The record gives the reactivity of an RNA of 207 nucleotides to DMS and 2A3.
Conditions: 150 mM KOAc, 10 mM MgCl2 and 150 mM bicine (pH 8.5), 24 C.
For 2A3 the reverse transcriptase was SuperScript II with manganese.
DMS adducts were read by reverse transcription with MarathonRT.

RNA sequence: GGGAACGACUCGAGUAGAGUCGAAAAGGCUACUCUUCUUUUCCUUUCCUCGUCUUCCCGGGUCAACCUCUUAAGUUCCUCUUCCUCCUCCUUGCUGAGGUUCUUGCCUCCCGAGCUGAGUUGGUUCCUCUUGUUCUCGAGGGCCUUCCUUCGUCGGCUUCUACAAUACGUUCGCGUAUUGUAGAAGAAAAGAAACAACAACAACAAC
Reactivity to DMS in 0.01 (KOAc 150mM, MgCl2 10mM, bicine 150mM(pH8.5), 24C), signal-to-noise 1, nucleotides 027 to 156: g030g030c100u020a040c140u000c040u030u010c050u020u000u010u000c010c020u010u000u020c020c030u000c050g000u000c030u010u000c000c000c000g000g030g010u010c050a100a200c030c010u020c030u010u000a120a140g000u000u000c010c000u000c030u000u010c030c030u000c050c010u000c070c020u000u010g000c090u000g020a100g000g050u000u010c040u000u000g030c040c020u010c020c030c000g010a090g040c070u010g000a160g020u000u010g020g000u000u010c000c040u000c040u000u010g020u000u000c060u010c070g010a080g040g010g030c050c030u010u000c020c000u000u000c030g040u000c050g030g000
Reactivity to 2A3 in 0.01 (KOAc 150mM, MgCl2 10mM, bicine 150mM(pH8.5), 24C), signal-to-noise 3, nucleotides 027 to 156: g070g050c050u120a090c070u110c040u180u120c030u090u060u040u070c000c010u010u000u020c030c020u010c010g020u020c030u040u020c000c010c010g000g000g020u080c070a070a040c020c000u010c040u080u140a150a080g010u060u000c000c000u020c000u060u030c000c030u000c000c010u020c010c000u030u060g020c040u060g040a010g050g000u040u080c060u050u110g040c000c000u010c010c000c000g010a000g010c020u060g010a050g130u020u010g030g010u160u300c010c000u040c020u040u130g070u210u060c080u050c110g000a000g000g000g020c000c000u000u000c010c000u030u040c010g220u000c010g010g030